Chemical mapping of a 207-nucleotide RNA with DMS and 2A3. Reactivities are given for positions 27 through 156. 2A3 adducts were read by reverse transcription with SuperScript II with manganese. For DMS, 1,310 sequencing reads were counted. The data come from the RNA Mapping Database (RMDB), library OK3TST.
RNA sequence: GGGAACGACUCGAGUAGAGUCGAAAAGACGUUUCCUACUCAUAGGAAAAAGACACCCAGUGGAAGUACAUGCAUUUUACCAUUAAGACGAUAUAUAUAAAUGUGACAUUUCCUGAACGUAACUAUUGGUAGACAUGUCUGAGAACAAGUAAAAUCAGUCCGUUUUAAUGUUCGCAUUAAAACGGACAAAAGAAACAACAACAACAAC
Reactivity to DMS in 0.01 (KOAc 150mM, MgCl2 10mM, bicine 150mM(pH8.5), 24C), signal-to-noise 1, nucleotides 027 to 156: g010a210c050g010u000u000u010c000c000u000a050c190u000c190a220u000a040g000g000a030a030a030a170a180g040a300c040a120c010c020c060a230g000u010g030g000a160a160g010u020a030c080a030u000g020c010a100u000u000u000u000a050c030c010a070u010u010a050a160g020a170c000g000a080u030a040u000a050u000a130u000a090a040a100u020g000u000g020a150c090a080u000u000u000c070c030u000g020a150a170c030g000u010a040a090c040u000a010u000u000g000g070u060a080g000a100c100a030u000g020u000c030u000g000a130g080a090a080c050a080a090g000u000a020a020a080a070u010c100a140
Reactivity to 2A3 in 0.01 (KOAc 150mM, MgCl2 10mM, bicine 150mM(pH8.5), 24C), signal-to-noise 2, nucleotides 027 to 156: g030a020c000g010u000u050u000c020c010u040a090c010u060c080a240u090a070g010g040a000a050a000a000a050g000a000c020a010c000c010c000a020g020u100g090g020a140a060g010u110a040c000a000u020g100c030a060u040u080u020u040a020c010c000a010u030u000a080a060g020a020c010g020a000u000a010u030a010u020a010u060a300a110a030u290g040u100g050a010c010a200u130u090u010c000c000u040g050a210a010c020g020u030a040a030c010u010a010u020u000g000g000u000a020g000a010c030a000u060g010u040c040u080g030a020g000a080a040c030a030a110g060u170a120a070a030a030u040c030a050